[RMDB]
RNA sequence: GGGAACGACUCGAGUAGAGUCGAAAAGAUAUGGAGGGUCCCUCUGCUUCUACCCACCUCGGAAACGAGAGGAAGAACUACAGACCACCCUCCUAAGUCAAAAGUGUGAUCCUUCGGGAUCACACAAGCAUAUCAUGCUGUUCGCAGCAUGAUAUGCAAAAGAAACAACAACAACAAC
Reactivity to DMS in 0.01 (KOAc 150mM, MgCl2 10mM, bicine 150mM(pH8.5), 24C), signal-to-noise 2, nucleotides 027 to 126: g010a050u000a250u010g000g000a030g000g010g020u000c070c020c030u000c000u000g020c190u000u000c000u000a110c020c000c020a190c180c000u000c040g000g000a140a070a180c000g010a020g020a060g000g000a130a050g000a010a030c100u000a060c000a000g010a040c170c070a060c030c000c010u000c000c020u000a030a090g000u010c060a160a060a140a060g000u040g010u000g000a000u000c000c000u000u030c140g010g020g000a000u000c000a000c000a000c000a040a020
Reactivity to 2A3 in 0.01 (KOAc 150mM, MgCl2 10mM, bicine 150mM(pH8.5), 24C), signal-to-noise 2, nucleotides 027 to 126: g030a020u080a100u220g000g000a010g000g000g020u070c060c030c000u000c000u010g030c010u040u040c010u040a110c000c020c050a220c080c000u000c000g040g010a090a110a090c010g010a010g010a010g050g010a020a010g010a020a060c170u280a060c270a000g010a020c030c090a020c020c030c000u000c000c000u020a100a020g060u040c080a020a030a130a200g010u020g010u000g010a010u030c030c000u050u100c300g060g030g000a000u000c000a000c000a000c000a000a010

This 177-nucleotide RNA was probed chemically with DMS and 2A3. For DMS the reverse transcriptase was MarathonRT. 2A3 adducts were read by reverse transcription with SuperScript II with manganese.